[RMDB]
RNA sequence: GGGAACGACUCGAGUAGAGUCGAAAAUGGUGGAAAACAGGAACGUCGGAGACGCUUCCGCGAGUUGAGGGCAGACACAGACUGAGAGCAGAAGCGACGUCUGUACCUCCGUUUUCCUUGGGGAGUCAUUUAGUGAUGCAUUCGUGCAUCACUAAAUAAAAGAAACAACAACAACAAC
Reactivity to 2A3 in 0.01 (KOAc 150mM, MgCl2 10mM, bicine 150mM(pH8.5), 24C), signal-to-noise 9, nucleotides 027 to 126: u170g050g010u060g040g000a040a020a010a040c050a040g030g030a040a030c030g030u040c070g220g090a150g030a090c050g010c130u030u000c010c000g010c030g020a090g030u090u180g040a050g000g020g010c040a010g030a040c020a020c010a090g130a130c030u100g050a080g040a030g300c060a040g040a180a010g060c020g040a050c050g020u000c000u010g030u200a300c000c000u000c000c000g000u000u000u010u000c010c000u010u050g040g010g000g010a030g050u060c020
Reactivity to DMS in 0.01 (KOAc 150mM, MgCl2 10mM, bicine 150mM(pH8.5), 24C), signal-to-noise 8, nucleotides 027 to 126: u020g000g010u020g010g000a030a020a060a030c040a230g010g010a030a040c050g010u000c020g020g020a120g010a080c050g000c200u010u000c000c010g010c150g010a110g020u030u020g000a040g000g000g010c030a030g010a060c060a120c170a170g000a090c030u010g000a190g020a160g020c050a040g010a110a130g000c030g010a140c170g000u000c000u000g000u010a040c010c000u000c000c060g000u000u000u010u000c010c000u000u010g010g000g010g010a110g000u020c100